[RMDB]
RNA sequence: GGGAACGACUCGAGUAGAGUCGAAAAGAGAUUUUAGGUAGAUCUCGCUCCUCAGCAAGGGGUAGUGCUUGCCCGGCAAGCAAGUACUCGAAUUGCUACCGGGGUGGUCGCUAUGUACAUAGCUAUAGAGGAUUAAAUAGUUCGCUAUUUAAUCCUCAAAAGAAACAACAACAACAAC
Reactivity to 2A3 in 0.01 (KOAc 150mM, MgCl2 10mM, bicine 150mM(pH8.5), 24C), signal-to-noise 9, nucleotides 027 to 126: g020a000g010a020u080u110u140u220a180g130g050u160a020g020a050u020c000u010c020g010c020u010c010c000u050c090a010g000c020a020a020g020g010g020g160u120a010g020u000g000c000u010u020g030c000c030c050g220g050c080a030a000g010c000a000a000g030u030a030c020u020c010g040a040a040u020u010g000c000u030a060c050c080g000g000g000g020u060g030g030u050c030g000c010u000a010u030g020u030a040c060a150u050a020g010c020u030a010u060a200
Reactivity to DMS in 0.01 (KOAc 150mM, MgCl2 10mM, bicine 150mM(pH8.5), 24C), signal-to-noise 9, nucleotides 027 to 126: g010a010g000a020u000u000u010u020a100g010g020u020a040g000a010u000c010u000c000g010c090u000c000c000u000c230a050g000c020a020a020g000g000g010g020u020a010g020u000g010c000u000u000g010c000c020c050g020g020c210a120a210g000c000a010a010g010u000a010c010u000c010g010a100a160u000u000g000c010u000a140c190c140g000g000g000g010u000g000g010u000c060g010c010u000a020u000g000u030a040c150a050u000a030g000c010u010a150u030a130
An RNA of 177 nucleotides, treated with 2A3 and DMS and read out base by base. 2A3 adducts were read by reverse transcription with SuperScript II with manganese. It was measured as part of the RMDB library OK1LIB. For DMS, 42,565 sequencing reads were counted.